[RMDB]
RNA sequence: GGGAACGACUCGAGUAGAGUCGAAAAGAUAAGCUGUGUUGCCAUUAGAACAUUUAAAUGAGUUUCAUUCUGAGUUUUGUAUUGUUAAACUGUGUCUGGAAACUAAACUUUAUAAUGUGUUACAUUUUAGGUCAGAAGACAUGUCUUCAUCUACAUGACAUCAGAGUCAGUUCGCUGACUCUGAUGUAAAAGAAACAACAACAACAAC
Reactivity to 2A3 in 0.01 (KOAc 150mM, MgCl2 10mM, bicine 150mM(pH8.5), 24C), signal-to-noise 2, nucleotides 027 to 156: g030a030u090a080a010g040c040u020g010u000g040u130u070g040c020c000a040u090u110a070g070a100a010c010a040u120u140u190a060a110a050u090g020a010g030u020u000u090c020a020u050u000c040u010g090a070g070u000u040u090u210g090u110a080u050u060g080u020u140a120a040a020c050u050g000u010g040u030c020u060g090g000a010a020a000c020u030a130a090a070c000u110u150u050a180u060a110a040u030g010u000g050u100u080a010c010a090u110u120u100u100a010g030g010u030c030a000g020a060a000g000a020c020a020u020g050u000c000u030u000c000a100u000c020u030a030c030a090u080g040
Reactivity to DMS in 0.01 (KOAc 150mM, MgCl2 10mM, bicine 150mM(pH8.5), 24C), signal-to-noise 1, nucleotides 027 to 156: g010a160u000a110a180g000c050u020g110u000g060u000u010g000c020c020a120u010u010a050g020a100a110c000a080u020u000u000a010a020a100u020g000a130g000u000u000u000c040a120u000u000c030u040g010a100g000u000u000u000u020g010u010a160u010u010g020u000u000a020a060a060c070u010g050u010g020u040c050u030g010g010a080a060a110c050u000a050a080a120c040u000u000u000a080u020a060a070u000g010u010g000u010u000a120c010a060u010u000u000u010a030g020g010u010c090a130g010a080a080g000a070c040a060u010g000u010c010u000u000c060a080u000c000u000a100c050a140u020g040